About this RNA:
The record gives the reactivity of an RNA of 177 nucleotides to DMS. Conditions: 150 mM KOAc, 10 mM MgCl2 and 150 mM bicine (pH 8.5), 24 C. The data come from the RNA Mapping Database (RMDB), library OK2TRN.
RNA sequence: GGGAACGACUCGAGUAGAGUCGAAAAUGCAUGGGGACCUUGGAGUCCCGCUGCUAAUGAUGGGUUGCUAUUCACAAUUAACACCCCUGACUCUGAUAGUAGCUAUCAUUCUGCUUGUGGCGCACUAAUACGGGUCAUGGUUCGCCAUGACCCGUAUAAAAGAAACAACAACAACAAC
Reactivity to DMS in 0.01 (KOAc 150mM, MgCl2 10mM, bicine 150mM(pH8.5), 24C), signal-to-noise 2, nucleotides 027 to 126: u000g020c000a050u020g020g020g010g010a030c000c000u050u000g040g000a230g030u000c000c000c000g010c000u000g030c030u000a060a010u000g020a040u000g000g020g020u000u000g000c020u000a010u020u000c060a070c170a050a130u000u020a050a140c080a280c020c020c000c020u000g000a090c120u000c100u000g000a050u000a030g010u000a050g020c010u000a030u010c080a060u000u000c130u000g000c110u000u000g010u000g020g010c080g010c080a110c110u010a040